[RMDB]
Description: Source: RMDB library TTRDES, as collected in RNAgym. An RNA of 177 nucleotides, treated with DMS and read out base by base.
RNA sequence: GGGAACGACUCGAGUAGAGUCGAAAAAAAGAUAUGGAUCCCACGUAACUUCAACAGCUAAUGGUGGGCUCGGAAACGAGCCGUAACAUCCAUUAGACAUGAAGGAUAAGUGGGAUCCUAAGUCAAAUCUCUAAUGGAACUUCGGUUCCAUUAGAGAAAAAGAAACAACAACAACAAC
Reactivity to DMS in 0.01 (KOAc 150mM, MgCl2 10mM, bicine 150mM(pH8.5), 24C), signal-to-noise 2, nucleotides 027 to 126: a090a080a100g010a110u020a300u000g010g000a000u000c040c000c000a010c010g000u000a120a260c010u000u000c020a030a100c200a230g040c010u000a000a020u010g000g020u020g020g000g000c020u000c010g040g000a070a090a150c000g000a010g000c010c000g000u000a000a050c170a000u030c000c000a040u010u000a000g020a020c090a160u010g010a040a000g000g000a050u000a120a180g000u010g000g000g000a000u000c000c000u000a030a100g010u000c030a090a170a120
Notes: For DMS the reverse transcriptase was MarathonRT. The RNA was probed in 150 mM KOAc, 10 mM MgCl2 and 150 mM bicine (pH 8.5) at 24 C. The DMS profile rests on 1,240 reads.